[RMDB]
RNA sequence: GGGAACGACUCGAGUAGAGUCGAAAAUUCACGGACAGCUUCAAACCGCGCUGCCUUUCGGCAUAUCCGAUACGGUUCAAGCCGUCAGCGCUGAAGAUAUGCAUCGCGCAGUGCAUCGUUUGAUUGAAUUAUAUACGGCCUUCGGGCCGUAUAUAAUAAAAGAAACAACAACAACAAC
Reactivity to 2A3 in 0.01 (KOAc 150mM, MgCl2 10mM, bicine 150mM(pH8.5), 24C), signal-to-noise 3, nucleotides 027 to 126: u030u010c000a000c040g050g060a050c120a130g070c070u030u010c040a020a000a030c010c010g010c010g000c000u020g000c000c010u050u040u060c100g090g000c000a010u010a010u030c010c020g080a050u040a130c000g010g060u120u300c110a100a050g040c000c000g010u020c050a120g080c100g000c100u100g060a070a010g010a010u010a010u020g010c050a010u030c030g020c000g000c080a010g000u000g020c000a040u110c020g040u010u010u010g040a040u020u130g010a000
Reactivity to DMS in 0.01 (KOAc 150mM, MgCl2 10mM, bicine 150mM(pH8.5), 24C), signal-to-noise 3, nucleotides 027 to 126: u010u040c010a080c090g030g020a130c160a100g020c050u030u020c020a020a020a030c030c180g010c000g000c010u000g000c010c030u000u000u020c200g020g000c000a020u000a000u020c030c000g000a230u030a050c030g010g000u010u060c230a150a100g050c000c000g010u000c170a090g020c170g000c160u010g030a150a090g000a030u010a000u000g010c000a060u000c050g000c210g030c010a010g000u000g010c000a020u000c160g000u000u020u000g010a050u030u020g000a150
An RNA of 177 nucleotides, treated with 2A3 and DMS and read out base by base.
The 2A3 profile rests on 1,677 reads.
2A3 adducts were read by reverse transcription with SuperScript II with manganese.
It was measured as part of the RMDB library OK1LIB.
Reactivities are given for positions 27 through 126.
The reactions ran in a buffer of 150 mM KOAc, 10 mM MgCl2 and 150 mM bicine (pH 8.5), at 24 C.